[RMDB]
RNA sequence: GGGAACGACUCGAGUAGAGUCGAAAAGGUGGUGAUUAUUAUCCCACCGUGCGGGGCUGCACUUGGACGAAGAAUGGCUUAGAAAUCAAGGCCUGAUUCAAGAAAACCCCCGCACCGAAAGGUCGGGGGACGCUCAAGUGUUCGCACUUGAGCGUCCAAAAGAAACAACAACAACAAC
Reactivity to 2A3 in 0.01 (KOAc 150mM, MgCl2 10mM, bicine 150mM(pH8.5), 24C), signal-to-noise 6, nucleotides 027 to 126: g020g000u040g010g050u200g110a050u020u250a080u130u130a010u110c000c000c010a000c000c000g000u010g000c010g000g000g010g010c070u130g010c090a020c030u030u020g010g000a020c050g060a050a080g090a160a110u140g010g000c000u020u020a050g160a150a190a060u210c100a120a050g030g010c000c010u050g060a240u010u010c010a020a020g040a030a070a010a020c000c000c020c010c000g000c010a000c010c000g040a090a020a000g060g020u040c020g020g000g020
Reactivity to DMS in 0.01 (KOAc 150mM, MgCl2 10mM, bicine 150mM(pH8.5), 24C), signal-to-noise 5, nucleotides 027 to 126: g010g010u000g010g020u060g010a040u020u020a100u050u050a230u010c000c000c000a020c020c020g000u000g020c020g010g000g000g010c060u000g000c230a110c010u000u000g010g000a020c110g000a140a130g000a150a080u020g000g010c000u000u010a150g000a130a100a100u030c180a160a190g000g000c000c000u000g000a300u000u000c020a020a010g000a040a060a150a140c250c000c000c000c000g010c070a000c010c080g010a050a060a100g000g000u000c060g000g000g010

This 177-nucleotide RNA was probed chemically with 2A3 and DMS. The reactions ran in a buffer of 150 mM KOAc, 10 mM MgCl2 and 150 mM bicine (pH 8.5), at 24 C. Source: RMDB libraries RFM100 and RFMREP, as collected in RNAgym.